[RMDB]
RNA sequence: GGGAACGACUCGAGUAGAGUCGAAAAUCCACACGGAGUAGAACAGAGAAAUCACCUCCAGAGGACCCCUUCAGCGAACAGAAGAGCACUGCACGGAAUAGGAGUAAGAGCGUAGCGAUGGGGGGAGCGUUAAUAGCGAGUUCGCUCGCUAUUAACGAAAAGAAACAACAACAACAAC
Reactivity to DMS in 0.01 (KOAc 150mM, MgCl2 10mM, bicine 150mM(pH8.5), 24C), signal-to-noise 1, nucleotides 027 to 126: u000c000c000a090c190a250c050g000g010a100g030u000a080g010a130a110c090a100g020a110g000a070a100a180u000c050a110c070c000u000c000c000a030g010a180g000g000a090c070c010c000c050u000u040c020a040g060c050g010a040a100c060a090g030a140a040g000a090g000c090a200c060u010g020c060a060c060g030g000a070a050u010a040g000g000a040g000u000a070a120g000a120g000c050g060u010a050g040c080g030a060u000g010g020g000g000g010g070a210g010
Reactivity to 2A3 in 0.01 (KOAc 150mM, MgCl2 10mM, bicine 150mM(pH8.5), 24C), signal-to-noise 1, nucleotides 027 to 126: u010c000c000a010c000a000c040g020g010a040g000u220a170g050a230a090c170a040g100a020g010a140a110a030u050c020a080c000c020u000c020c000a040g070a030g140g060a030c020c000c000c020u020u090c040a030g030c010g000a080a040c010a050g140a210a000g010a070g000c010a010c050u090g000c060a020c060g070g010a080a130u100a150g100g050a090g000u060a150a030g000a010g000c000g030u050a040g000c000g060a020u080g010g000g070g000g000g000a000g030